[RMDB]
RNA sequence: GGGAACGACUCGAGUAGAGUCGAAAAGUAUCUGCCCCGCCUCUUGCAGGCUGAGAGGAGCCUCGUGUCCUCACCGAAGGCGGGGGCUUCGUCGAACCGCACCUCUCGGAGGAUGUCGCGCCGCACGGAAUCCCAUACUUUUCGAAGUAUGGGAUUCAAAAGAAACAACAACAACAAC
Reactivity to DMS in 0.01 (KOAc 150mM, MgCl2 10mM, bicine 150mM(pH8.5), 24C), signal-to-noise 6, nucleotides 027 to 126: g000u000a080u000c090u000g010c030c000c010c030g010c020c010u000c060u000u000g030c140a070g010g010c100u020g020a120g010a060g000g010a100g000c040c040u000c110g000u020g020u000c010c010u000c040a130c140c100g000a100a040g000g010c010g000g020g000g000g010c010u000u010c080g000u010c030g000a110a220c200c030g000c050a070c060c020u000c030u010c090g010g010a080g020g000a070u010g010u010c050g010c090g010c180c010g020c120a060c210g010
Reactivity to 2A3 in 0.01 (KOAc 150mM, MgCl2 10mM, bicine 150mM(pH8.5), 24C), signal-to-noise 5, nucleotides 027 to 126: g030u030a090u110c070u160g070c010c000c010c000g020c000c010u040c020u070u170g060c130a090g010g030c070u070g090a070g020a020g050g070a060g060c010c030u080c060g180u130g050u140c000c010u030c020a100c030c060g090a090a010g000g000c010g010g000g000g000g000c010u060u060c030g130u030c010g010a030a030c020c010g000c020a040c010c010u040c000u080c080g140g020a020g030g030a140u060g040u130c010g000c010g000c040c010g020c020a040c060g040
Structure probing data (DMS and 2A3) for a 177-nucleotide construct. The 2A3 profile rests on 7,277 reads. DMS adducts were read by reverse transcription with MarathonRT. The reactions ran in a buffer of 150 mM KOAc, 10 mM MgCl2 and 150 mM bicine (pH 8.5), at 24 C.